RNA sequence: GGGAACGACUCGAGUAGAGUCGAAAAGGGACACAGCCAAACAGUAUCACUGAUUAUGAGAAACAUUAAAAUCAGAACUACAAGGAGAUAUCUCAUUCCAGCUAAAUGGCUUGUGUCCAAAAGACAGGCAACAACACACUGGUGAGGAUGUGAAGAACUAACAAGGACCUUUCGAGGUCCUUGUUAGAAAAGAAACAACAACAACAAC
Reactivity to DMS in 0.01 (KOAc 150mM, MgCl2 10mM, bicine 150mM(pH8.5), 24C), signal-to-noise 2, nucleotides 027 to 156: g000g000g000a030c010a030c030a030g020c000c000a060a080a100c130a210g030u000a230u000c130a080c010u000g040a020u000u020a060u020g010a030g020a190a170a230c090a110u000u000a010a100a080a130u000c030a090g000a070a220c060u000a040c050a100a190g010g010a110g010a090u000a080u000c000u000c030a060u000u000c010c020a110g030c010u000a060a220a140u000g020g000c000u020u010g020u000g000u000c070c010a000a030a080a110g010a050c020a080g010g010c020a050a030c040a050a110c060a050c070a060c060u000g010g060u000g000a020g010g000a060u000g000u010g010a030a210g000a110a220
Reactivity to 2A3 in 0.01 (KOAc 150mM, MgCl2 10mM, bicine 150mM(pH8.5), 24C), signal-to-noise 3, nucleotides 027 to 156: g070g010g010a000c000a000c000a010g010c000c010a090a050a000c050a090g060u080a050u180c060a030c080u010g000a170u110u060a020u080g060a030g050a130a120a050c070a080u140u210a060a100a120a060u080c040a060g090a130a050c060u110a050c130a120a080g090g000a030g050a050u160a090u090c040u000c010a050u050u020c020c000a040g050c040u030a100a090a100u040g010g000c000u090u150g010u010g000u000c000c000a010a010a010a000g000a000c000a020g010g070c000a030a060c000a030a010c020a060c010a020c080u020g000g000u070g010a020g020g000a010u070g010u070g060a020a050g030a110a030